RNA sequence: GGGAACGACUCGAGUAGAGUCGAAAAUUGCAUGGAAUCAUAGAUGGCCUUUUCAGUUGAACUGGUAGCCUGUUUUAACAUCUUUUUAUAUCUGGCUCUCUCUGCCAAAAAUGUUCUUAAUAGUCUAGGAAUGGUUCCUUCUAUUGAUCUAUCGAAAAAGCAGUUUGUAUUUCGAUACAAACUGCUUAAAAGAAACAACAACAACAAC
Reactivity to DMS in 0.01 (KOAc 150mM, MgCl2 10mM, bicine 150mM(pH8.5), 24C), signal-to-noise 2, nucleotides 027 to 156: u000u000g000c010a120u000g000g000a120a100u010c010a040u000a080g000a090u000g010g020c020c020u020u000u000u000c050a130g020u010u020g000a090a230c040u010g000g020u010a080g020c080c000u000g020u000u010u000u000a030a090c040a030u000c000u000u000u010u020u010a090u000a080u090c070u010g020g030c010u000c030u000c090u000c030u000g040c020c030a030a040a050a080a070u000g010u000u000c080u020u000a060a070u000a070g020u010c040u010a090g020g030a080a100u000g000g000u000u010c020c000u000u000c000u000a090u010u000g010a090u000c050u000a140u000c020g010a040a080a110
Reactivity to 2A3 in 0.01 (KOAc 150mM, MgCl2 10mM, bicine 150mM(pH8.5), 24C), signal-to-noise 1, nucleotides 027 to 156: u110u100g090c020a010u010g080g000a110a130u090c000a000u000a060g040a010u040g060g000c000c010u010u030u050u160c030a030g020u030u050g110a100a050c010u030g030g000u040a010g010c010c000u020g060u020u060u010u060a030a020c020a040u080c020u060u100u150u140u030a200u070a080u160c030u030g010g030c000u010c010u000c000u000c060u090g080c000c040a030a080a050a020a020u050g000u020u000c040u050u120a080a080u030a040g020u000c050u040a030g010g060a080a020u030g030g030u090u140c000c000u000u030c010u050a070u010u110g000a000u000c020u030a070u090c030g030a080a090a000
Chemical mapping of a 207-nucleotide RNA with DMS and 2A3. For DMS the reverse transcriptase was MarathonRT. The DMS profile rests on 3,238 reads. Conditions: 150 mM KOAc, 10 mM MgCl2 and 150 mM bicine (pH 8.5), 24 C. High DMS reactivity at an A or C suggests that its Watson-Crick edge is free.